[RMDB]
Notes:
The record gives the reactivity of an RNA of 177 nucleotides to DMS and 2A3. The 2A3 profile rests on 1,795 reads. 2A3 adducts were read by reverse transcription with SuperScript II with manganese. The RNA was probed in 150 mM KOAc, 10 mM MgCl2 and 150 mM bicine (pH 8.5) at 24 C. The DMS profile rests on 2,625 reads.

RNA sequence: GGGAACGACUCGAGUAGAGUCGAAAACACCCCAGGGGUUGCGGAGCUCACGCCGGGUGUGGCUUGACGCCCGGGCACCGGCCGGUGGGUAGCCAGCGCGCUUUGUCCGGUUACUUUUCCAGUGUGACCCAGCAAUAUUCUUCGGAAUAUUGCUGGGAAAAGAAACAACAACAACAAC
Reactivity to DMS in 0.01 (KOAc 150mM, MgCl2 10mM, bicine 150mM(pH8.5), 24C), signal-to-noise 1, nucleotides 027 to 126: c130a110c020c000c080c150a110g000g000g000g000u000u000g000c020g010g000a220g050c040u000c030a060c120g000c000c000g000g000g000u020g020u000g020g010c050u020u010g040a120c080g000c020c010c060g000g000g000c080a120c050c030g000g010c040c060g000g000u010g000g000g010u000a080g000c000c030a070g000c020g010c060g030c020u000u040u010g010u000c030c060g000g010u000u000a050c120u010u000u000u000c010c000a210g000u030g000u000g030a300
Reactivity to 2A3 in 0.01 (KOAc 150mM, MgCl2 10mM, bicine 150mM(pH8.5), 24C), signal-to-noise 3, nucleotides 027 to 126: c120a070c000c000c010c000a050g000g010g030g050u060u090g050c050g030g090a050g020c020u020c050a040c030g110c010c000g010g070g040u070g030u050g080g030c060u070u150g040a040c050g020c000c010c010g000g030g000c020a040c020c000g030g020c020c020g070g010u060g000g060g000u020a030g070c010c000a010g020c030g000c000g030c070u050u050u080g040u050c020c000g020g030u050u030a070c020u040u090u040u010c000c020a030g030u040g030u030g210a050